RNA sequence: GGGAACGACUCGAGUAGAGUCGAAAAUAUUUAGCGUCUCCAGAAUUCAUUUAAAUCGGGCUGCCGCAUUCGCGACAAGCAGCUCAAAUUGAAGCCAGUUAGAGGCGGUUGUCGAAUGCUAUAGCUGGACGUAAUAGUAUUUCGAUACUAUUACGUCAAAAGAAACAACAACAACAAC
Reactivity to DMS in 0.01 (KOAc 150mM, MgCl2 10mM, bicine 150mM(pH8.5), 24C), signal-to-noise 4, nucleotides 027 to 126: u030a050u010u030u020a070g020c050g030u000c010u000c010c040a160g000a130a070u010u010c020a040u000u030u020a040a130a100u020c180g000g000g000c000u000g030c020c040g000c030a120u020u030c170g010c030g020a070c110a050a250g010c020a020g000c000u000c010a010a040a060u000u000g000a080a050g000c170c040a070g040u030u020a040g000a050g010g020c040g030g000u000u010g000u010c020g010a050a060u030g000c040u010a060u010a080g030c050u000g000
Reactivity to 2A3 in 0.01 (KOAc 150mM, MgCl2 10mM, bicine 150mM(pH8.5), 24C), signal-to-noise 6, nucleotides 027 to 126: u160a040u100u270u080a070g020c000g020u000c000u000c010c010a030g080a180a140u050u080c030a030u020u140u300a110a170a130u150c050g000g010g000c010u010g010c020c010g040c060a080u170u300c180g000c000g020a040c050a160a040g000c000a000g000c000u000c020a010a020a010u040u040g030a030a000g080c030c030a030g060u090u150a030g050a020g040g010c020g030g000u020u020g050u040c060g070a060a040u060g020c030u080a040u110a240g100c040u080g020
Chemical mapping of a 177-nucleotide RNA with DMS and 2A3. The reactions ran in a buffer of 150 mM KOAc, 10 mM MgCl2 and 150 mM bicine (pH 8.5), at 24 C. 2A3 adducts were read by reverse transcription with SuperScript II with manganese. Reactivities are given for positions 27 through 126.